[RMDB]
An RNA of 177 nucleotides, treated with DMS and 2A3 and read out base by base. Reactivities are rounded to 0.1 and cut off at 0 and 3. The data come from the RNA Mapping Database (RMDB), library OK1LIB. Values cover nucleotides 27 to 126. For DMS the reverse transcriptase was MarathonRT. The reactions ran in a buffer of 150 mM KOAc, 10 mM MgCl2 and 150 mM bicine (pH 8.5), at 24 C.
RNA sequence: GGGAACGACUCGAGUAGAGUCGAAAAGAAAACAAGUACCGAGAACAUUGUUUUCGCUGCUUGGCGUUGCCGUUUUGUGUUGCAGUUGGUUGGGUAACGCCGCAAAUACCAACGGGAAAGAAAGAUACGUGGUAGGUAAUUUCGAUUACCUACCACGAAAAGAAACAACAACAACAAC
Reactivity to DMS in 0.01 (KOAc 150mM, MgCl2 10mM, bicine 150mM(pH8.5), 24C), signal-to-noise 3, nucleotides 027 to 126: g000a070a030a080a050c010a010a010g010u010a060c270c020g010a060g010a040a020c020a170u020u020g020u000u000u000u000c010g010c200u000g000c000u000u000g010g000c030g010u000u000g000c000c000g010u040u030u000u020g010u010g010u000u020g000c060a120g020u010u000g010g010u000u010g000g010g020u020a030a040c130g000c010c010g000c080a040a030a100u030a050c000c000a050a010c030g010g020g000a100a020a070g000a090a070a090g000a130u030a090
Reactivity to 2A3 in 0.01 (KOAc 150mM, MgCl2 10mM, bicine 150mM(pH8.5), 24C), signal-to-noise 3, nucleotides 027 to 126: g020a000a030a010a010c000a000a010g030u020a110c040c080g070a070g010a050a080c140a300u070u250g020u030u010u000u000c000g000c040u010g010c000u050u070g020g000c000g010u010u020g020c020c000g060u040u060u070u050g240u020g060u090u100g100c100a100g000u100u100g080g050u020u050g020g000g010u020a000a000c000g000c000c000g000c030a000a030a000u130a010c010c000a000a000c000g030g050g050a000a100a010g060a010a090a000g070a060u140a140